Conditions: 150 mM KOAc, 10 mM MgCl2 and 150 mM bicine (pH 8.5), 24 C.
Structure probing data (2A3 and DMS) for a 177-nucleotide construct.
The DMS profile rests on 1,400 reads.
RNA sequence: GGGAACGACUCGAGUAGAGUCGAAAACAUCUAAGAGUUGCAAUAGGUUGGUUUACACAACCUGACUCAUAUGUCUCACAAGCAAUAUACGAGAAUUUGUCAAAGUUGACUGGUGAAGAUUGGACUGGACAGUGCUGAGUUUCGACUCAGCACUGUCAAAAGAAACAACAACAACAAC
Reactivity to 2A3 in 0.01 (KOAc 150mM, MgCl2 10mM, bicine 150mM(pH8.5), 24C), signal-to-noise 2, nucleotides 027 to 126: c140a050u010c060u290a110a070g010a000g130u020u140g280c170a230a110u120a170g000g000u010u040g050g060u000u100u300a050c180a000c000a030a000c000c000u000g000a000c000u000c000a000u000a040u080g000u000c050u000c000a010c000a000a020g000c000a000a000u000a020u020a120c030g190a070g020a130a300u100u300u060g000u230c000a000a170a000g100u000u030g100a140c000u000g020g070u000g030a090a220g010a010u000u300g000g010a000c000u030g010
Reactivity to DMS in 0.01 (KOAc 150mM, MgCl2 10mM, bicine 150mM(pH8.5), 24C), signal-to-noise 2, nucleotides 027 to 126: c080a180u000c140u000a090a190g000a020g000u000u000g000c220a100a160u130a040g030g000u000u000g000g000u000u030u070a230c250a000c110a000a000c000c000u000g000a020c030u000c030a110u000a070u040g030u000c060u000c000a000c220a130a000g000c020a000a030u000a050u000a090c140g020a040g000a080a080u060u030u060g000u050c150a090a060a110g000u150u000g000a000c000u000g000g000u000g000a050a010g020a050u000u000g000g020a110c090u000g030

It was measured as part of the RMDB library OK1LIB.